[RMDB]
RNA sequence: GGGAACGACUCGAGUAGAGUCGAAAACUUCUGGCCAUAGCUCUCCACCUAAUAUCACAGAACACACGCCAUGGAUGGAUCACCCGAGUCGCUUGUGCUUCACUGAUGUUUUCUAUCACUGGUCUGAUACUGCCUAAAAUUUCGAUUUUAGGCAGUAAAAAGAAACAACAACAACAAC
Reactivity to 2A3 in 0.01 (KOAc 150mM, MgCl2 10mM, bicine 150mM(pH8.5), 24C), signal-to-noise 3, nucleotides 027 to 126: c010u060u010c030u050g020g040c030c010a100u090a050g010c010u010c000u030c020c010a030c020c020u070a110a080u080a030u130c050a050c030a090g130a140a010c030a000c010a010c050g010c010c020a040u060g000g040a030u060g040g020a040u120c050a030c050c000c030g030a020g050u040c030g020c050u010u040g020u050g060c010u060u030c030a040c060u030g020a040u020g080u000u110u070u010c040u050a090u080c010a030c140u080g020g030u010c000u000g020a050
Reactivity to DMS in 0.01 (KOAc 150mM, MgCl2 10mM, bicine 150mM(pH8.5), 24C), signal-to-noise 5, nucleotides 027 to 126: c080u000u000c040u000g010g020c050c040a080u000a100g010c050u000c020u000c030c020a060c060c050u000a080a090u000a070u000c050a070c090a150g000a080a060c070a060c080a080c110g000c020c030a070u010g000g000a060u000g010g010a070u010c060a060c020c030c020g010a060g010u000c050g010c040u000u000g000u000g010c050u000u010c060a080c090u000g020a040u000g010u000u000u000u000c050u000a050u000c060a050c070u010g020g000u000c050u000g010a250